[RMDB]
RNA sequence: GGGAACGACUCGAGUAGAGUCGAAAAUCCUCUCUGUGCUCCAACAGUUACACUUAGAGGCUAAUAGUAGGGCCUGGGCUUUCUGUGUUAAAUGCCAUAAUGAUAUAUUGGCAGCAACAGACCCCAGCACAUCAAGACAGUUCGCUGUCUUGAUGUGAAAAGAAACAACAACAACAAC
Reactivity to DMS in 0.01 (KOAc 150mM, MgCl2 10mM, bicine 150mM(pH8.5), 24C), signal-to-noise 2, nucleotides 027 to 126: u000c000c000u000c050u010c010u000g020u000g010c060u040c100c090a100a090c200a090g010u010u010a090c030a030c080u030u000a070g020a050g000g000c150u010a070a070u010a150g010u010a090g000g000g030c100c020u010g010g000g040c090u000u000u010c010u000g010u000g000u040u000a020a070a110u000g010c000c010a030u010a020a070u010g030a150u000a200u010a140u000u000g020g010c040a040g000c150a020a000c000a030g010a040c300c000c000c010a050g050
Reactivity to 2A3 in 0.01 (KOAc 150mM, MgCl2 10mM, bicine 150mM(pH8.5), 24C), signal-to-noise 2, nucleotides 027 to 126: u000c000c000u030c010u000c000u000g030u030g010c030u030c050c040a130a060c000a170g030u120u130a050c040a020c020u030u070a000g000a030g050g000c020u050a040a060u060a230g100u060a090g030g030g010c010c020u000g000g010g010c000u010u150u030c010u040g020u000g040u050u150a100a160a090u030g000c010c000a010u020a100a060u100g160a000u050a030u040a040u270u010g000g000c010a040g010c010a010a060c010a010g010a040c000c010c000c010a010g030

An RNA of 177 nucleotides, treated with DMS and 2A3 and read out base by base. It was measured as part of the RMDB library 15KREP. For 2A3 the reverse transcriptase was SuperScript II with manganese. For DMS the reverse transcriptase was MarathonRT. Values cover nucleotides 27 to 126.